Conditions: 150 mM KOAc, 10 mM MgCl2 and 150 mM bicine (pH 8.5), 24 C. Structure probing data (DMS and 2A3) for a 207-nucleotide construct.
RNA sequence: GGGAACGACUCGAGUAGAGUCGAAAAGAGCUUUUUCUGCAGGCUGUAUUCCUUGUGGCACAUCAAAAAUUCUAGGAAGUACAGACACUAUCUUGCUAGGCAGUAAUUGUAUAGCAGGAAGUGAAAGUAAUGGAAAUGUGCCUUACCUGCAGCAAAAGCUCAUUAUGGGAUUCGUCCCAUAAUGAGCAAAAGAAACAACAACAACAAC
Reactivity to DMS in 0.01 (KOAc 150mM, MgCl2 10mM, bicine 150mM(pH8.5), 24C), signal-to-noise 3, nucleotides 027 to 156: g010a130g030c010u010u000u010u000u010c000u020g010c020a010g000g030c020u010g020u010a150u010u000c050c060u010u000g050u000g010g010c010a020c000a020u010c050a030a070a090a080a070u000u000c060u010a150g030g020a110a130g020u000a050c080a030g000a300c040a020c010u000a100u000c010u000u000g000c000u000a010g010g070c020a060g000u000a110a180u010u000g040u040a050u000a010g030c000a010g010g000a050a070g010u000g000a050a130a270g010u000a040a080u000g010g010a060a040a300u010g020u000g000c000c000u000u000a010c000c020u000g010c000a020g000c130a000a030a050a100
Reactivity to 2A3 in 0.01 (KOAc 150mM, MgCl2 10mM, bicine 150mM(pH8.5), 24C), signal-to-noise 4, nucleotides 027 to 156: g090a000g040c030u000u050u020u050u040c000u000g000c000a000g000g000c020u070g080u130a110u050u100c030c010u050u110g080u070g010g020c000a010c010a020u110c110a040a100a120a070a120u180u050c050u060a030g070g040a160a070g090u030a010c000a010g110a030c000a000c000u250a300u210c000u000u010g000c010u000a010g040g000c000a010g040u300a240a100u100u010g000u010a020u010a040g000c000a000g000g010a010a010g000u010g020a050a020a000g010u030a030a050u070g040g020a040a030a010u000g000u000g000c000c010u000u010a020c020c000u000g000c000a000g000c000a020a000a000a020